[RMDB]
An RNA of 177 nucleotides, treated with DMS and 2A3 and read out base by base. For 2A3, 2,448 sequencing reads were counted. DMS adducts were read by reverse transcription with MarathonRT. The RNA was probed in 150 mM KOAc, 10 mM MgCl2 and 150 mM bicine (pH 8.5) at 24 C. It was measured as part of the RMDB library OK1LIB. For DMS, 4,238 sequencing reads were counted.
RNA sequence: GGGAACGACUCGAGUAGAGUCGAAAAUGGCUGCAGCUGUGGUCGUCGUUGUCUCGUUCAAACUUCGACCUCAGCAAAAAGCUUGAAGCAUCUGAGGGAGCCAACGCAUGUUCACCACUUCCGUGGCUAUGCUGCAGUCAUUCGUGACUGCAGCAUAAAAAGAAACAACAACAACAAC
Reactivity to DMS in 0.01 (KOAc 150mM, MgCl2 10mM, bicine 150mM(pH8.5), 24C), signal-to-noise 3, nucleotides 027 to 126: u020g000g010c000u000g000c240a100g010c010u000g020u000g000g000u000c000g050u000c030g000u000u000g030u030c100u040c200g010u020u020c030a060a020a030c020u000u010c000g000a020c020c010u000c050a050g000c090a000a030a020a170a030g020c090u000u010g010a110a080g020c060a040u010c040u010g000a060g010g000g000a060g000c020c030a090a070c080g070c070a030u020g010u000u010c080a120c020c050a080c040u000u010c080c070g000u020g000g040c140
Reactivity to 2A3 in 0.01 (KOAc 150mM, MgCl2 10mM, bicine 150mM(pH8.5), 24C), signal-to-noise 4, nucleotides 027 to 126: u130g040g000c010u050g010c040a110g000c010u000g000u030g050g000u020c000g010u010c000g020u030u020g040u010c090u040c160g300u280u060c060a140a090a020c030u020u020c040g000a000c000c010u000c020a000g000c000a020a020a020a020a020g020c000u020u050g010a020a020g020c030a040u040c040u080g030a060g030g040g020a020g010c000c000a060a010c020g060c050a040u100g040u070u120c040a050c100c010a000c020u140u080c010c080g030u030g030g000c010